An RNA of 207 nucleotides, treated with 2A3 and read out base by base. It was measured as part of the RMDB library OK3TST.
RNA sequence: GGGAACGACUCGAGUAGAGUCGAAAAGCGGCCAACCUGUGGCUGCCAAUGUUAUGGGGCCACCCGUUCUGCAACCCACGUCGGUAUCAGCAUUGUCGCUAGAACCAACACCGCCUAUUGAAUCACCUAAGGCUGAGAGCACUGCGUCAACCCCGCACUGCGCGUUAAUAUUCGUAUUAACGCGCAGAAAAGAAACAACAACAACAAC
Reactivity to 2A3 in 0.01 (KOAc 150mM, MgCl2 10mM, bicine 150mM(pH8.5), 24C), signal-to-noise 2, nucleotides 027 to 156: g010c000g000g000c170c020a050a020c050c110u060g010u010g000g000c010u110g270c040c020a050a030u120g100u160u190a290u140g000g000g000g000c000c000a030c000c040c010g000u070u040c010u020g020c020a030a090c000c000c000a020c040g130u130c080g120g030u120a130u120c010a020g020c060a050u070u290g130u080c060g000c020u000a030g010a090a020c030c000a010a010c060a060c070c030g080c000c010u040a140u050u170g070a040a080u040c030a220c070c010u040a080a060g030g000c030u070g080a090g000a010g110c010a010c060u050g000c020g000u080c010a050a080c010c020c000c010g120c010a020
The RNA was probed in 150 mM KOAc, 10 mM MgCl2 and 150 mM bicine (pH 8.5) at 24 C. For 2A3, 561 sequencing reads were counted. Values are in units of 0.01, from 0 to 300, in steps of 10. Values cover nucleotides 27 to 156. For 2A3 the reverse transcriptase was SuperScript II with manganese.